[RMDB]
RNA sequence: GGGAACGACUCGAGUAGAGUCGAAAAACUAACGUGGAAAUUCUGCUCAUAUUAAUGUCACCUCACUUUACCCAAAGUGAGCACUUAUCAGAAGCCUAGAAGGAGUUCUGAAAUUAUUUGAGGGCUCAUCUUGUCCUUGAUUCGUCAAGGACAAGAUAAAAGAAACAACAACAACAAC
Reactivity to 2A3 in 0.01 (KOAc 150mM, MgCl2 10mM, bicine 150mM(pH8.5), 24C), signal-to-noise 2, nucleotides 027 to 126: a000c050u060a050a050c060g130u110g110g060a050a040a230u090u020c040u090g070c010u000c030a090u090a060u240u120a110a060u080g050u100c010a010c060c000u000c010a000c010u070u050u090a090c020c000c000a000a000a050g020u020g000a000g000c000a000c010u140u200a100u060c000a000g040a130a040g100c010c010u120a130g070a230a030g150g000a030g070u040u000c000u000g080a070a080a090u140u060a090u050u090u090g070a070g020g010g000c030u010c010
Reactivity to DMS in 0.01 (KOAc 150mM, MgCl2 10mM, bicine 150mM(pH8.5), 24C), signal-to-noise 2, nucleotides 027 to 126: a100c090u010a040a100c160g010u000g010g000a110a070a080u000u010c020u020g000c120u000c030a050u020a040u010u010a070a040u000g000u000c030a070c180c000u000c000a020c010u000u000u010a120c130c090c100a080a050a030g010u010g000a000g000c090a040c050u000u000a080u000c050a030g020a040a010g020c000c010u000a080g030a090a050g000g030a070g000u000u000c000u000g010a020a120a090u000u000a080u000u000u010g020a080g000g000g000c090u010c090